[RMDB]
RNA sequence: GGGAACGACUCGAGUAGAGUCGAAAACACCACAUCUUCGGAUGUGGUGAAGGCAAUCUACGGAUUGCCAAGCCUCUUACUUCGGUAAGAGGCAACGUGUGCCGUUCGCGGCACACGAACCGGUACGGUGACGUACCGGAAGGUGAACGUUCGCGUUCACCAAGCUUCAUCGGUGACGAUGAAGCACACGAUCUUCGGAUCGUGAAGCUUGGUGCUUAGCUUCUUUCACCAAGCAUAUUACACGCGGAUAACCGCCAAAGGAGAAUACUGCUAUAUUCGUAUAGCAGAAAAGAAACAACAACAACAAC
Reactivity to DMS in 0.01 (KOAc 150mM, MgCl2 10mM, bicine 150mM(pH8.5), 24C), signal-to-noise 2, nucleotides 027 to 266: c000a010c000c000a010c030a000u000c000u010u020c170g020g010a020u000g000u000g010g040u000g000a060a050g010g000c000a010a000u000c020u010a130c230g040g000a020u000u000g020c000c000a050a040g010c010c000u010c000u010u000a010c000u010u000c200g020g000u000a000a000g000a000g000g010c000a000a020c050g030u000g010u000g010c020c000g020u010u030c160g040c020g000g000c010a010c030a000c010g000a110a090c010c010g000g010u000a000c000g010g000u010g000a040c000g020u000a010c000c000g010g010a010a030g000g010u000g000a030a010c000g000u010u030c190g050c000g010u000u000c000a000c000c000a080a040g010c000u000u000c000a000u000c000g010g000u020g000a110c000g030a010u000g000a010a020g010c030a070c010a000c000g010a010u000c000u010u040c140g030g000a000u000c000g010u000g000a130a090g010c000u000u010g020g020u000g000c190u020u000a080g010c030u000u000c000u000u010u000c010a020c030c010a000a010g010c000a060u000a030u010u020a100c160a090c170g010c000g000g000a270u030a240a130c040c010g010c010c300a020a030a050g010g000a030g000a140a140u030a180
Reactivity to 2A3 in 0.01 (KOAc 150mM, MgCl2 10mM, bicine 150mM(pH8.5), 24C), signal-to-noise 9, nucleotides 027 to 266: c000a000c000c000a000c000a000u000c010u060u090c260g150g000a000u000g000u000g000g000u000g000a010a010g000g000c000a000a000u000c000u020a020c240g120g000a000u000u000g000c000c000a000a020g000c000c000u000c000u000u010a000c000u020u050c220g120g000u000a000a000g000a000g000g000c000a000a000c020g000u000g000u000g000c010c010g020u040u050c280g030c010g110g000c000a000c000a000c000g000a040a070c000c000g000g000u000a000c000g000g020u030g020a010c000g000u000a000c000c000g000g000a000a050g000g000u000g000a010a010c010g000u050u080c270g030c000g100u000u000c020a000c000c000a010a010g000c000u000u000c000a000u000c000g020g050u070g040a030c000g000a000u000g000a000a000g000c000a000c000a000c000g000a000u000c000u040u090c200g120g000a000u000c000g000u010g070a030a010g000c000u000u000g010g010u010g010c040u040u020a050g070c000u030u010c000u010u020u010c000a000c000c000a000a000g000c000a000u030a020u060u160a070c080a030c070g020c010g020g030a110u200a300a300c030c010g030c020c020a040a020a010g040g030a020g070a050a130u200a190